[RMDB]
RNA sequence: GGGAACGACUCGAGUAGAGUCGAAAAAACAGAUUUGAAUAUACAGACAGUCUCAGACUAUGAUGGUUUGACAUGAUUUAUAUUGACUUUAUGAUGGUGUGAAAGGAAAGCACUUUUCAGUAGAAACUGUCUUUAAAUCUCUGGGUGAGAUAGGAAAGUCCCCUAUCAUAUUCGUAUGAUAGGGGACAAAAGAAACAACAACAACAAC
Reactivity to 2A3 in 0.01 (KOAc 150mM, MgCl2 10mM, bicine 150mM(pH8.5), 24C), signal-to-noise 2, nucleotides 027 to 156: a010a010c080a000g020a050u090u150u190g070a070a020u120a020u020a210c030a010g170a010c010a010g010u020c000u010c020a020g010a070c000u060a010u160g060a070u110g020g020u000u030u050g010a010c000a000u110g020a050u030u190u070a090u010a050u010u060g020a030c050u140u080u060a050u130g050a010u050g000g040u030g000u000g080a090a040a060g050g050a050a020a000g040c000a040c000u170u090u110u040c080a070g010u030a010g070a040a120a000c020u000g000u000c000u010u030u010a060a160a090u040c040u040c090u070g030g010g040u080g030a020g000a040u020a010g080g050a080a030a000
Reactivity to DMS in 0.01 (KOAc 150mM, MgCl2 10mM, bicine 150mM(pH8.5), 24C), signal-to-noise 1, nucleotides 027 to 156: a080a090c050a080g000a050u000u000u000g040a060a110u010a180u010a120c070a090g040a070c010a040g050u010c040u000c050a110g010a100c010u000a100u030g010a190u000g000g030u010u010u000g000a060c070a060u000g020a080u010u000u010a030u000a070u010u030g050a080c160u000u000u020a070u040g010a100u000g000g030u000g030u020g040a060a050a110g010g000a130a090a300g010c010a050c020u020u000u010u000c040a060g020u010a080g010a060a070a050c010u010g010u000c010u000u000u000a030a060a060u000c010u000c100u020g000g010g000u000g010a100g000a130u010a070g000g010a120a120a200